About this RNA:
This 207-nucleotide RNA was probed chemically with DMS and 2A3. Values are in units of 0.01, from 0 to 300, in steps of 10. The reactions ran in a buffer of 150 mM KOAc, 10 mM MgCl2 and 150 mM bicine (pH 8.5), at 24 C. Source: RMDB library M2RFPK, as collected in RNAgym.
[RMDB]
RNA sequence: GGGAACGACUCGAGUAGAGUCGAAAAGAUUCGUCGUUGUUGAGCGAGGUUUAAACAAAUCGACCACACAAACGUAGAGCCGACUACGGAUUUAUAAAUUAAGGCAUUAAGUGUGAUAAGGAGACAAAAAACGAUGUUGUGUUCGCACAACAUCGAAGGAAUAAUAAAACUUCGGUUUUAUUAUUCCAAAAGAAACAACAACAACAAC
Reactivity to DMS in 0.01 (KOAc 150mM, MgCl2 10mM, bicine 150mM(pH8.5), 24C), signal-to-noise 2, nucleotides 027 to 156: g020a170u000u010c030g000u000c030g040u000u000g030u000u000g010a140g030c050g040a130g030g040u000u010u010a070a080a120c080a130a090a180u000c030g020a080c030c000a040c020a170c070a130a080a110c030g000u000a030g000a180g020c000c030g010a120c020u000a030c000g000g030a250u010u000u000a020u000a040a020a070u000u000a020a020g000g000c000a280u010u000a030a220g000u000g010u010g000a040u010a070a080g110g010a150g010a070c070a000a040a030a070a070a150c030g030a010u000g010u000u000g040u000g020u000u000c300g020c010a030c000a000a010c020a000u000c020g020a010a060
Reactivity to 2A3 in 0.01 (KOAc 150mM, MgCl2 10mM, bicine 150mM(pH8.5), 24C), signal-to-noise 2, nucleotides 027 to 156: g090a110u160u170c060g020u020c010g020u080u010g010u010u030g010a060g020c110g030a060g050g070u020u170u200a110a170a040c060a010a030a000u050c020g020a050c040c010a040c000a000c010a020a150a050c010g000u000a000g000a010g000c000c000g010a010c010u010a010c030g050g000a020u080u300u060a230u100a030a010a000u050u090a020a000g020g030c000a000u070u180a090a060g000u000g000u010g010a000u030a080a000g110g010a050g010a040c110a020a090a010a050a050a020c020g000a000u020g000u000u000g000u000g030u040u030c120g050c090a000c000a000a000c000a000u000c000g000a000a000
For DMS the reverse transcriptase was MarathonRT.